Chemical mapping of a 177-nucleotide RNA with DMS and 2A3. 2A3 adducts were read by reverse transcription with SuperScript II with manganese. Values cover nucleotides 27 to 126. 2A3 is a SHAPE reagent: it acylates the 2'-hydroxyl of flexible nucleotides of all four kinds. DMS (dimethyl sulfate) methylates the pairing face of unpaired adenines and cytosines.

RNA sequence: GGGAACGACUCGAGUAGAGUCGAAAACACCCCCUUUUCACUUUGCCAAUUGGACUUAUGUCUUUAUUGGUCAUUCAAGUGGGGCAAAAGAAAUAUCCUUUUAAAACUCAGGCAAACUGGGUGUUUGAUUUUGCCGAUGAUUCGUCAUCGGCAAAAUAAAAGAAACAACAACAACAAC
Reactivity to DMS in 0.01 (KOAc 150mM, MgCl2 10mM, bicine 150mM(pH8.5), 24C), signal-to-noise 2, nucleotides 027 to 126: c210a240c060c030c010c090c030u050u040u000u010c120a020c050u030u020u000g010c000c010a000a050u010u000g000g000a020c010u040u010a160u070g010u000c000u000u000u020a000u000u000g000g000u020c300a050u030u010c180a070a050g000u010g010g040g000g010c100a000a100a030a110g000a170a060a070u030a110u040c020c040u000u040u010u010a020a160a140a060c020u010c070a030g010g000c080a070a010a150c000u010g020g000g060u010g000u040u000u000g030
Reactivity to 2A3 in 0.01 (KOAc 150mM, MgCl2 10mM, bicine 150mM(pH8.5), 24C), signal-to-noise 2, nucleotides 027 to 126: c060a050c000c000c000c010c020u020u020u090u060c040a100c070u030u060u030g000c000c000a000a010u000u000g000g000a010c010u260u140a120u300g040u060c000u030u300u080a040u010u010g000g050u020c050a050u020u070c050a020a000g050u080g000g000g010g050c000a000a030a000a100g070a030a080a000u080a100u060c000c000u110u100u030u050a080a160a010a030c030u040c060a020g050g030c090a280a010a100c030u000g000g030g020u030g020u080u090u080g060